Structure probing data (DMS and 2A3) for a 177-nucleotide construct.

[RMDB]
RNA sequence: GGGAACGACUCGAGUAGAGUCGAAAAGCCGUGCUCGAGAGGGAGCAGAAAAUGCAGAGCUAUCCCGUCGUUUCGCUAAACAAAUGGGAAACGACAAAUUGCGUUACAUACGCAAUCCUCUAAUGAACCUCCUCAUGUAUUUCGAUACAUGAGGAGGAAAAGAAACAACAACAACAAC
Reactivity to DMS in 0.01 (KOAc 150mM, MgCl2 10mM, bicine 150mM(pH8.5), 24C), signal-to-noise 3, nucleotides 027 to 126: g030c060c020g020u010g010c000u000c000g000a030g020a030g000g000g000a010g030c010a090g000a040a040a060a080u010g010c070a080g000a100g000c030u010a150u000c000c010c010g020u000c000g000u010u000u000c010g000c020u000a030a120a160c300a060a090a090u020g000g000g000a000a000a000c000g000a020c010a020a070a030u000u000g010c000g020u010u020a120c230a060u000a020c010g000c020a010a010u000c020c010u010c010u010a090a070u010g000a100a180
Reactivity to 2A3 in 0.01 (KOAc 150mM, MgCl2 10mM, bicine 150mM(pH8.5), 24C), signal-to-noise 3, nucleotides 027 to 126: g000c010c000g070u020g010c010u010c030g110a050g010a020g050g060g020a010g000c000a000g190a020a170a010a020u200g010c060a020g050a040g060c000u030a070u070c000c000c000g000u000c010g000u000u020u000c130g000c130u070a150a200a100c090a040a130a090u100g050g000g000a000a000a000c010g020a000c030a000a110a010u010u010g000c000g010u020u090a190c060a120u200a040c040g000c000a010a000u030c000c000u020c020u030a090a130u170g090a030a040